About this RNA: Source: RMDB library RFM100, as collected in RNAgym. Structure probing data (DMS and 2A3) for a 177-nucleotide construct. High 2A3 reactivity points to a flexible backbone, as in loops and unpaired stretches.
[RMDB]
RNA sequence: GGGAACGACUCGAGUAGAGUCGAAAAGAAAGAAAGAGCCUUGUCCUGCGCCUCCUUUCGGCGGGCCGCCGCUUCAUCGGCAGGAUAGGCGAAUUGUACGCUGUAGUAGAGAUCAGGCUGUUCCUAAGCCUAACUAGUGCUUCGGCACUAGUUAGGCAAAAGAAACAACAACAACAAC
Reactivity to DMS in 0.01 (KOAc 150mM, MgCl2 10mM, bicine 150mM(pH8.5), 24C), signal-to-noise 1, nucleotides 027 to 126: g050a050a140a030g010a090a110a000g020a260g000c000c000u000u000g040u000c000c000u000g000c010g010c110c010u000c070c030u010u000u030c100g000g030c060g000g000g030c120c220g020c130c000g010c130u000u150c160a070u060c050g000g030c000a000g020g060a030u010a000g000g050c070g030a110a060u030u000g030u060a020c030g000c060u060g000u000a170g000u030a010g010a130g000a000u090c110a030g000g000c050u020g000u000u010c000c000u000a120a290
Reactivity to 2A3 in 0.01 (KOAc 150mM, MgCl2 10mM, bicine 150mM(pH8.5), 24C), signal-to-noise 2, nucleotides 027 to 126: g130a000a100a000g120a000a080a000g160a010g020c000c000u120u050g080u040c000c000u020g020c000g090c000c000u070c010c000u090u070u170c120g010g040c020g000g080g070c030c080g050c000c000g100c030u150u080c070a080u080c050g000g000c000a030g040g000a030u000a010g010g020c020g000a020a000u060u050g000u020a020c000g000c030u030g100u130a080g010u000a070g100a000g010a120u090c040a010g020g000c020u030g030u030u000c000c000u020a100a000